[RMDB]
RNA sequence: GGGAACGACUCGAGUAGAGUCGAAAAUGAGAGGAAGUCGGUGCAGAGGUAGGAUUCCGACUCAGGUCUGGGGUCUCAUGCUGAUGUUCUUGCCAUUAGUCAGACUCCGCUGGGAGGCUGGGCUGUACAUACAUGAGUCGUUCGCGACUCAUGUAUGAAAAGAAACAACAACAACAAC
Reactivity to 2A3 in 0.01 (KOAc 150mM, MgCl2 10mM, bicine 150mM(pH8.5), 24C), signal-to-noise 2, nucleotides 027 to 126: u090g020a020g010a030g030g030a130a000g010u020c040g020g040u050g030c080a020g000a030g140g090u090a040g010g050a090u080u030c020c020g030a040c040u030c040a020g020g070u020c040u180g010g000g000g040u030c010u020c020a070u200g020c000u040g020a050u040g050u120u040c030u070u130g050c020c010a080u040u060a020g030u050c050a000g010a060c000u020c010c020g010c080u090g060g020g010a050g020g000c040u040g040g050g000c030u040g010u050a040
Reactivity to DMS in 0.01 (KOAc 150mM, MgCl2 10mM, bicine 150mM(pH8.5), 24C), signal-to-noise 4, nucleotides 027 to 126: u000g000a100g020a140g010g010a070a060g020u000c030g010g020u010g030c080a080g020a100g010g010u010a100g000g000a150u010u000c030c020g010a100c040u000c120a090g010g000u010c030u000g040g000g010g010u000c020u000c130a050u010g020c030u000g000a040u010g010u020u010c080u000u000g020c210c020a050u010u010a060g020u000c180a040g000a040c010u010c010c020g010c140u010g000g010g000a130g000g010c090u010g010g000g020c040u010g010u020a130